[RMDB]
RNA sequence: GGGAACGACUCGAGUAGAGUCGAAAAAUCUGUUCCUUUCAGCAGAAACUAACGGCUUGUGGAUUUCUUUCUGACUAACAACAGGUCUAACACUCCUCGUCACUAUUACUAUUAACAGCUUGGAUGUUGUUCAUGUUGAAUUCGUUCAACAUGAACAAAAAGAAACAACAACAACAAC
Reactivity to DMS in 0.01 (KOAc 150mM, MgCl2 10mM, bicine 150mM(pH8.5), 24C), signal-to-noise 2, nucleotides 027 to 126: a050u000c050u010g010u030u000c090c060u000u040u010c130a030g000c300a030g000a050a040a080c090u020a060a110c060g010g000c080u040u040g010u000g000g020a140u000u010u000c010u000u020u010c140u010g000a080c080u000a060a080c170a050a050c080a060g010g000u010c010u020a030a040c090a100c050u010c020c000u000c070g030u000c040a040c050u000a040u010u000a030c070u000a090u000u010a040a120c100a030g000c080u000u010g000g000a080u030g010u000
Reactivity to 2A3 in 0.01 (KOAc 150mM, MgCl2 10mM, bicine 150mM(pH8.5), 24C), signal-to-noise 6, nucleotides 027 to 126: a000u020c030u040g010u040u020c050c000u010u060u090c030a050g020c000a010g040a070a090a030c030u070a080a030c050g070g030c060u110u090g040u050g040g100a170u070u030u030c010u000u110u020c020u050g100a120c030u060a090a010c040a010a020c020a040g020g000u000c020u040a060a010c030a010c030u030c030c000u010c010g040u030c040a010c050u030a030u220u090a050c050u020a060u190u080a140a040c020a040g090c030u060u050g060g040a070u070g090u030

Background:
This 177-nucleotide RNA was probed chemically with DMS and 2A3. Conditions: 150 mM KOAc, 10 mM MgCl2 and 150 mM bicine (pH 8.5), 24 C. Source: RMDB libraries RFM100 and RFMREP, as collected in RNAgym. 2A3 adducts were read by reverse transcription with SuperScript II with manganese.